[RMDB]
RNA sequence: GGGAACGACUCGAGUAGAGUCGAAAAGGGGUCGUACUCCCCACCCGAUCUAACAGAGCGAAGAACAUGGCUGAAGCCUCCACGGCCAUGGGAGCUCUGUAGAUCGGAGGUACGACGGAGGCACCCAAACGGAUACUUUCUUCGGAAAGUAUCCGAAGGUGGUUAAGAUGUUCGCAUCUUAACCACCAAAAGAAACAACAACAACAAC
Reactivity to 2A3 in 0.01 (KOAc 150mM, MgCl2 10mM, bicine 150mM(pH8.5), 24C), signal-to-noise 1, nucleotides 027 to 156: g030g020g050g010u000c000g020u010a030c010u100c160c030c010c010a000c000c000c000g000a000u000c010u010a170a230c010a000g010a000g010c010g190a300a020g000a010a000c000a000u000g000g000c020u030g010a170a020g020c010c000u050c000c000a020c000g000g000c000c040a000u010g000g000g000a010g000c000u010c000u000g000u010a000g000a020u000c000g010g010a000g000g010u010a010c020g030a020c160g090g000a000g000g000c000a010c110c010c000a100a100a030c000g000g000a000u020a020c000u030u000u010c000u030u060c120g040g000a000a000a000g000u000a000u000c000c000g000a000a000